[RMDB]
RNA sequence: GGGAACGACUCGAGUAGAGUCGAAAACGCCAACGCAGCGGGCUCCGUUGGCGGCGGCCCGGCCCGACGCAGAAAGAUCGUCUUCGGUGCGCAGCAGCAGCAGCAGCAGCAGCACGCAUCUGCAGAGGGCUAAGUCUUGCUUCGGCAAGGCUUAGCCAAAAGAAACAACAACAACAAC
Reactivity to DMS in 0.01 (KOAc 150mM, MgCl2 10mM, bicine 150mM(pH8.5), 24C), signal-to-noise 2, nucleotides 027 to 126: c060g000c000c000a000a010c000g030c150a130g010c000g010g000g000c030u030c070c000g010u000u000g020g020c000g010g010c060g010g020c000c050c080g000g000c020c000c000g000a210c080g000c020a030g000a020a120a110g000a140u010c040g000u030c010u000u040c080g000g050u000g000c000g030c090a060g000c010a140g020c030a150g040c130a140g000c020a100g000c020a040g040c000a030g000c060a060c050g000c000a040u020c030u060g010c100a030g020a300g000
Reactivity to 2A3 in 0.01 (KOAc 150mM, MgCl2 10mM, bicine 150mM(pH8.5), 24C), signal-to-noise 3, nucleotides 027 to 126: c010g030c000c000a000a010c020g070c050a070g050c020g080g040g020c020u040c030c010g020u010u020g010g010c010g010g010c010g030g060c010c000c000g030g010c010c000c000g020a010c020g020c020a020g130a060a130a010g090a120u170c040g050u000c040u100u080c060g060g010u040g020c020g010c070a080g000c010a020g010c010a000g000c010a000g000c020a000g000c010a010g000c010a010g020c020a000c010g000c010a070u030c030u060g010c030a020g040a080g120
This 177-nucleotide RNA was probed chemically with DMS and 2A3.
For 2A3, 3,592 sequencing reads were counted.
Reactivities are given for positions 27 through 126.
2A3 adducts were read by reverse transcription with SuperScript II with manganese.
For DMS the reverse transcriptase was MarathonRT.